[RMDB]
Conditions: 150 mM KOAc, 10 mM MgCl2 and 150 mM bicine (pH 8.5), 24 C. This 177-nucleotide RNA was probed chemically with DMS and 2A3. Reactivities are given for positions 27 through 126. 2A3 adducts were read by reverse transcription with SuperScript II with manganese. DMS adducts were read by reverse transcription with MarathonRT.

RNA sequence: GGGAACGACUCGAGUAGAGUCGAAAACGGACGAGGUGAGUGAGCGCAGCGCCACUGGACACAAAUCUCUCGUUUCAGAAAGUGGCGUUGCAGGCAGUGGAUUUGUUGCUGGGGGUGAUGCGGGCGGCGGAGGGCUAGUAUUCGUACUAGCCCUCCGAAAAGAAACAACAACAACAAC
Reactivity to DMS in 0.01 (KOAc 150mM, MgCl2 10mM, bicine 150mM(pH8.5), 24C), signal-to-noise 2, nucleotides 027 to 126: c050g030g000a090c040g000a030g000g020u000g020a060g010u030g000a170g060c190g000c020a030g020c010g000c000c000a000c010u000g040g020a120c300a110c210a060a070a050u030c130u010c070u020c080g010u000u010u020c110a030g010a150a070a010g000u000g010g000c040g020u000u000g030c060a060g000g050c010a010g010u040g000g000a120u000u020u030g000u030u000g000c050u000g000g000g000g000g000u000g000a050u000g000c080g000g050g020c070g000g010
Reactivity to 2A3 in 0.01 (KOAc 150mM, MgCl2 10mM, bicine 150mM(pH8.5), 24C), signal-to-noise 2, nucleotides 027 to 126: c020g020g030a000c010g000a010g010g030u060g030a060g020u110g050a030g110c000g000c020a000g000c000g000c010c000a030c020u010g040g060a020c090a010c010a070a250a210u050c050u000c000u030c170g040u060u190u010c030a030g100a090a130a000g000u010g000g000c020g000u000u020g010c010a020g040g010c030a000g000u080g050g110a150u110u090u200g040u040u090g000c010u040g000g010g000g000g060u080g000a080u090g030c000g000g000g000c000g000g030